Conditions: 150 mM KOAc, 10 mM MgCl2 and 150 mM bicine (pH 8.5), 24 C.
An RNA of 207 nucleotides, treated with 2A3 and DMS and read out base by base.
DMS adducts were read by reverse transcription with MarathonRT.
Values are in units of 0.01, from 0 to 300, in steps of 10.
[RMDB]
RNA sequence: GGGAACGACUCGAGUAGAGUCGAAAAGCUAACUUUCUUGGUUCUUCGAAAGUGGUUGCUGAGAGUUCGCAAGCGUUACCGUCACAUUCUAGUAAUGAAAUCAGAUAACUGAGAUGGUCAAAUAUGUUUAUUACAUCUCUUUCUUAUUACAUAUCACAGACGAUGUAAAUUUCGAUUUACAUCGUCUAAAAGAAACAACAACAACAAC
Reactivity to 2A3 in 0.01 (KOAc 150mM, MgCl2 10mM, bicine 150mM(pH8.5), 24C), signal-to-noise 4, nucleotides 027 to 156: g010c010u040a010a070c000u040u130u120c020u060u060g070g000u070u060c010u090u060c040g050a050a060a070g060u040g010g060u130u070g030c050u030g010a030g000a030g060u030u070c060g000c080a070a020g040c030g100u080u080a040c000c020g060u070c050a020c000a140u140u050c050u110a060g030u130a120a080u020g030a040a000a010u030c030a020g030a060u030a090a080c020u020g010a000g000a010u040g050g030u110c080a040a090a060u150a080u150g120u120u210u070a100u110u060a040c000a000u000c000u000c000u000u040u000c000u000u020a030u020u030a020c020a040u100a030u230c070a040c030
Reactivity to DMS in 0.01 (KOAc 150mM, MgCl2 10mM, bicine 150mM(pH8.5), 24C), signal-to-noise 4, nucleotides 027 to 156: g030c040u000a090a050c020u000u000u000c020u010u010g020g010u000u000c030u000u000c060g010a070a090a110g060u010g010g020u000u010g020c020u020g000a140g000a170g020u010u010c060g010c070a070a110g020c050g030u010u000a050c020c010g010u000c070a090c060a090u010u010c040u010a100g010u010a030a050u000g010a070a080a120u010c080a120g000a090u010a030a060c060u000g010a040g010a040u010g030g000u010c100a070a050a100u000a050u010g000u000u000u000a060u030u000a080c010a030u010c010u000c020u000u000u000c050u000u000a090u000u000a080c050a150u000a140u000c090a130c160